[RMDB]
RNA sequence: GGGAACGACUCGAGUAGAGUCGAAAAUCCCAAAGCGGAUUUAGCUCGGUUGGGAGAGGUCCAGACCGAAGAUCUGGCAGUCCUGUGUUCGAUCCACAGAAUUCGCACCAUAAACAACGGGAGAUUCCCGUGCCGUACUAUUCGUAGUACGGCACGGAAAAGAAACAACAACAACAAC
Reactivity to DMS in 0.01 (KOAc 150mM, MgCl2 10mM, bicine 150mM(pH8.5), 24C), signal-to-noise 2, nucleotides 027 to 126: u000c010c060c000a100a040a090g080c050g000g000a000u010u030u050a150g000c010u000c000g040g000u040u000g020g070g020a050g000a020g000g020u060c070c010a000g000a020c030c050g000a080a110g030a290u000c000u000g000g000c020a150g000u020c110c010u000g000u030g000u000u000c090g000a200u080c080c070a030c020a010g000a150a060u000u000c040g000c050a120c190c250a100u040a070a050a040c220a130a090c050g000g000g000a160g020a250u020u000c060
Reactivity to 2A3 in 0.01 (KOAc 150mM, MgCl2 10mM, bicine 150mM(pH8.5), 24C), signal-to-noise 4, nucleotides 027 to 126: u020c060c000c000a080a030a010g000c010g000g040a020u000u020u160a030g020c000u000c020g040g010u110u160g080g060g010a070g000a020g020g120u020c000c000a010g030a020c010c090g170a080a050g050a100u010c010u040g040g000c000a010g040u080c010c010u040g020u010g000u030u030c040g000a050u000c000c010a020c000a010g020a010a020u030u010c020g010c020a090c010c010a050u290a120a160a040c100a050a050c050g060g010g000a070g020a100u080u030c040